[RMDB]
This 177-nucleotide RNA was probed chemically with 2A3 and DMS. For 2A3, 2,102 sequencing reads were counted.

RNA sequence: GGGAACGACUCGAGUAGAGUCGAAAAGGCGUCUAGGAACGCGAUUGUUUCGGCAGUCGUAGGCUCCACAAUGGCGCACUGGCGCGCGUGCAGCUUGGCAUCUUGCGAGCAGCCCAACGCGUUCCGGCCGUUCCCCAAAAUUCGUUUUGGGGAACGGAAAAGAAACAACAACAACAAC
Reactivity to 2A3 in 0.01 (KOAc 150mM, MgCl2 10mM, bicine 150mM(pH8.5), 24C), signal-to-noise 2, nucleotides 027 to 126: g070g000c020g020u000c070u090a090g000g000a040a010c000g000c010g040a050u020u040g040u040u120u110c170g190g000c020a000g000u000c010g040u100a180g090g010c080u000c020c020a060c070a010a170u160g030g000c030g030c030a050c040u030g070g000c020g010c000g020c010g030u070g000c030a040g000c020u090u190g230g000c060a110u120c130u110u200g020c020g000a010g050c020a020g000c020c010c010a020a020c020g020c000g010u020u040c000c040g020g010
Reactivity to DMS in 0.01 (KOAc 150mM, MgCl2 10mM, bicine 150mM(pH8.5), 24C), signal-to-noise 2, nucleotides 027 to 126: g000g010c020g000u000c020u000a120g000g000a040a040c010g000c000g020a050u000u010g000u010u000u000c180g030g020c000a030g030u000c020g000u000a040g060g010c090u000c020c010a080c260a090a060u000g020g000c020g020c010a090c060u010g000g010c060g030c000g000c070g020u010g000c070a050g020c040u000u010g040g010c100a110u010c120u020u010g010c010g010a030g020c010a110g020c010c180c100a080a070c020g000c000g010u000u000c010c000g000g010
For DMS the reverse transcriptase was MarathonRT. It was measured as part of the RMDB library OK2TST. Conditions: 150 mM KOAc, 10 mM MgCl2 and 150 mM bicine (pH 8.5), 24 C. 2A3 is a SHAPE reagent: it acylates the 2'-hydroxyl of flexible nucleotides of all four kinds.